Chemical mapping of a 207-nucleotide RNA with DMS and 2A3. For DMS, 8,269 sequencing reads were counted. 2A3 adducts were read by reverse transcription with SuperScript II with manganese. The RNA was probed in 150 mM KOAc, 10 mM MgCl2 and 150 mM bicine (pH 8.5) at 24 C. DMS adducts were read by reverse transcription with MarathonRT.

RNA sequence: GGGAACGACUCGAGUAGAGUCGAAAACGCUGGGCCACAUAGUUAAUGUAGGGAGCUGAAGCGCGCACGGCGAGGAUCUACACUAACGAAAUGUGGCCUGUGCUGAAGCGCGCACGGCAACCGAAAGGUGCGAAAUAUCCGCUUUCGAGCGGAUAAAUACUAUUGGUAGAUUCGUCUACCAAUAGUAAAAAGAAACAACAACAACAAC
Reactivity to DMS in 0.01 (KOAc 150mM, MgCl2 10mM, bicine 150mM(pH8.5), 24C), signal-to-noise 3, nucleotides 027 to 156: c080g000c020u000g010g020g020c000c000a010c010a030u000a080g010u000u000a010a030u000g010u000a010g010g000g000a040g030c000u000g000a040a080g010c010g050c000g030c000a300c030g010g010c000g020a070g030g010a030u000c000u000a010c010a010c010u000a060a040c040g000a040a060a300u000g020u000g010g020c000c010u000g010u000g000c010u000g010a140a070g000c030g020c010g040c000a090c080g020g000c020a100a140c030c010g020a060a160a200g010g010u000g000c020g000a060a110a190u000a020u000c000c000g000c010u000u000u010c270g000a050g000c000g020g010a000u000a010a050a130
Reactivity to 2A3 in 0.01 (KOAc 150mM, MgCl2 10mM, bicine 150mM(pH8.5), 24C), signal-to-noise 3, nucleotides 027 to 156: c040g000c010u020g000g000g000c010c010a000c000a010u070a130g010u010u000a010a010u010g000u000a000g010g010g000a010g010c010u030g030a080a030g010c010g000c000g000c010a010c010g000g000c000g020a210g010g020a000u000c000u010a000c000a010c020u010a010a010c010g080a140a030a020u010g000u000g000g000c000c010u010g020u020g000c020u110g030a100a040g000c010g000c010g000c020a020c020g110g000c060a140a150c010c000g020a050a040a020g000g020u040g010c010g030a090a080a000u100a010u000c010c000g010c050u120u100u170c300g080a000g000c000g000g000a000u010a000a010a000